An RNA of 207 nucleotides, treated with 2A3 and DMS and read out base by base. The RNA was probed in 150 mM KOAc, 10 mM MgCl2 and 150 mM bicine (pH 8.5) at 24 C. For DMS the reverse transcriptase was MarathonRT. Values cover nucleotides 27 to 156. For 2A3 the reverse transcriptase was SuperScript II with manganese.
[RMDB]
RNA sequence: GGGAACGACUCGAGUAGAGUCGAAAACAAAUCAAAACAAGCAAACACAAAAACCACAGAAUUGCAUCUUUUUGGACUAGCAACUGUUUCCUUUUGGAUAUGGGGUUCUGUGGAUGAGGAUGAAGGAGUGGGAGAGAAGUCUGGGAAGAUAAUUUGACCAUGAGUACUCAUUCGUGAGUACUCAUGGAAAAGAAACAACAACAACAAC
Reactivity to 2A3 in 0.01 (KOAc 150mM, MgCl2 10mM, bicine 150mM(pH8.5), 24C), signal-to-noise 4, nucleotides 027 to 156: c030a010a070a050u200c030a030a040a030a170c050a110a020g080c050a080a080a060c030a050c050a110a120a090a060a040c030c010a020c010a030g080a060a020u030u110g030c010a040u030c020u070u120u070u110u170g030g010a040c050u090a040g050c050a060a090c050u080g080u060u080u040c020c000u060u080u090u150g040g000a020u020a080u130g080g010g010g010u030u000c010u040g030u040g010g000a000u040g020a000g020g000a010u060g050a050a030g030g020a020g020u080g000g030g010a030g000a010g010a090a010g010u040c070u100g000g030g040a030a020g040a040u140a140a080u180u140u220g030a030
Reactivity to DMS in 0.01 (KOAc 150mM, MgCl2 10mM, bicine 150mM(pH8.5), 24C), signal-to-noise 1, nucleotides 027 to 156: c020a090a080a220u000c050a050a070a030a110c110a090a090g050c020a060a190a110c130a040c040a050a070a050a150a100c020c030a040c010a100g010a060a110u000u000g000c010a100u000c010u000u000u000u040u000g030g000a040c060u010a100g040c000a060a130c090u000g000u000u000u000c010c030u000u000u000u020g030g010a020u010a060u000g000g050g000g000u000u000c010u010g020u000g000g030a080u010g010a080g010g000a090u010g020a130a100g000g010a060g000u010g010g000g000a070g000a070g000a040a050g030u000c020u030g040g010g090a120a100g000a110u000a070a200u000u000u000g010a250